This 207-nucleotide RNA was probed chemically with 2A3. Conditions: 150 mM KOAc, 10 mM MgCl2 and 150 mM bicine (pH 8.5), 24 C. For 2A3 the reverse transcriptase was SuperScript II with manganese.

[RMDB]
RNA sequence: GGGAACGACUCGAGUAGAGUCGAAAAUUACCGCCCAAGAUGGGGUGCAGCGUUCCUGCAAUAUCCAGGGCACCUAGGUGCAGCCUUGUAGUUUUAGUGGACUUUAGGCUAAAGAAUUUCACUAGCAAAAAUCUUUAAGGGUUCGCCCUUAAAGAAACAGUAAUGCAGGGUUCGCCCUGCAUUACUGAAAAGAAACAACAACAACAAC
Reactivity to 2A3 in 0.01 (KOAc 150mM, MgCl2 10mM, bicine 150mM(pH8.5), 24C), signal-to-noise 1, nucleotides 027 to 156: u070u020a110c000c010g040c000c020c000a040a060g200a070u090g020g010g000g020u020g000c020a000g010c010g080u100u110c000c000u020g040c000a020a050u070a030u300c030c020a000g040g010g000c000a000c000c050u130a090g150g000u020g040c000a000g040c000c010u070u050g100u130a040g010u000u020u050u180a020g010u020g020g000a000c010u030u030u000a020g080g010c000u070a080a110a000g060a050a070u090u160u210c020a000c010u050a000g050c050a000a070a150a120a140u020c000u000u000u000a000a000g060g010g020u060u060c100g080c000c000c000u000u000a000a000a000g000a000a010a000